[RMDB]
RNA sequence: GGGAACGACUCGAGUAGAGUCGAAAAUCUGAGGUGACGAUAUCGGUGGUCUUGAGCCUGUAGGAGUCUUUACGAAGGCGCGUGACCUGGACGCCGAGGUACUGGACGAUGUCGAGCAUCACCCUCAACAUCCUAAGCCAUUCGUGGCUUAGGAUGUAAAAGAAACAACAACAACAAC
Reactivity to 2A3 in 0.01 (KOAc 150mM, MgCl2 10mM, bicine 150mM(pH8.5), 24C), signal-to-noise 1, nucleotides 027 to 126: u060c030u060g070a030g030g020u010g000a020c020g020a010u010a000u050c030g000g080u090g010g000u000c000u020u090g020a070g000c020c020u100g130u100a030g000g070a040g020u010c000u070u080u030a110c150g090a080a020g030g000c010g000c010g100u080g050a100c010c000u010g030g000a020c030g000c020c010g020a020g040g040u090a090c050u050g030g010a050c010g020a060u030g000u030c010g020a030g060c020a030u030c020a030c040c000c000u020c020a000
Reactivity to DMS in 0.01 (KOAc 150mM, MgCl2 10mM, bicine 150mM(pH8.5), 24C), signal-to-noise 4, nucleotides 027 to 126: u010c070u000g000a110g000g040u000g000a070c020g020a060u000a040u010c020g010g020u000g010g010u010c000u000u010g000a260g020c020c000u010g020u000a140g020g000a160g010u020c070u010u010u010a140c140g010a090a050g000g000c000g020c100g010u010g010a070c020c020u000g000g030a070c130g010c020c020g010a080g020g000u000a080c100u010g000g000a120c040g000a040u000g000u000c020g000a110g010c080a120u000c020a140c040c020c040u000c070a130
Conditions: 150 mM KOAc, 10 mM MgCl2 and 150 mM bicine (pH 8.5), 24 C. Structure probing data (2A3 and DMS) for a 177-nucleotide construct. The DMS profile rests on 4,353 reads. High 2A3 reactivity points to a flexible backbone, as in loops and unpaired stretches. 2A3 adducts were read by reverse transcription with SuperScript II with manganese. For DMS the reverse transcriptase was MarathonRT. Reactivities are given for positions 27 through 126.